[RMDB]
RNA sequence: GGGAACGACUCGAGUAGAGUCGAAAAGUGAUGACGAAACGUUGGAACACGUUAAGCUAGCAGACCCUGAAGCUCAGGCUUGCGUAGAGCUGGUCCGUGAGUAUCUGGUGGUCCAGAAGCGCAUAGGGCAUACAGAGCGGUUCGCCGCUCUGUAUGCAAAAGAAACAACAACAACAAC
Reactivity to DMS in 0.01 (KOAc 150mM, MgCl2 10mM, bicine 150mM(pH8.5), 24C), signal-to-noise 3, nucleotides 027 to 126: g020u050g010a120u000g000a050c040g020a130a080a040c090g010u000u000g050g010a200a110c170a050c020g030u000u010a040a140g030c030u000a020g000c070a170g000a030c010c000c000u000g040a060a270g000c030u000c020a210g000g000c000u010u010g030c090g000u000a090g060a300g000c010u000g020g030u010c000c060g000u030g000a060g000u000a060u010c010u050g020g010u020g010g020u010c030c050a080g000a060a040g000c020g030c100a060u040a110g020g030
Reactivity to 2A3 in 0.01 (KOAc 150mM, MgCl2 10mM, bicine 150mM(pH8.5), 24C), signal-to-noise 1, nucleotides 027 to 126: g110u080g050a090u090g050a050c040g040a080a030a000c030g000u010u040g070g070a060a040c050a000c090g030u040u040a030a000g000c020u020a010g030c030a010g020a040c000c010c000u050g080a070a020g020c000u010c040a010g030g020c000u030u070g010c020g050u090a050g020a030g180c010u020g000g010u050c020c030g140u100g060a010g030u030a110u120c060u070g140g060u180g090g010u080c000c000a020g020a130a040g020c020g000c050a060u110a090g080g040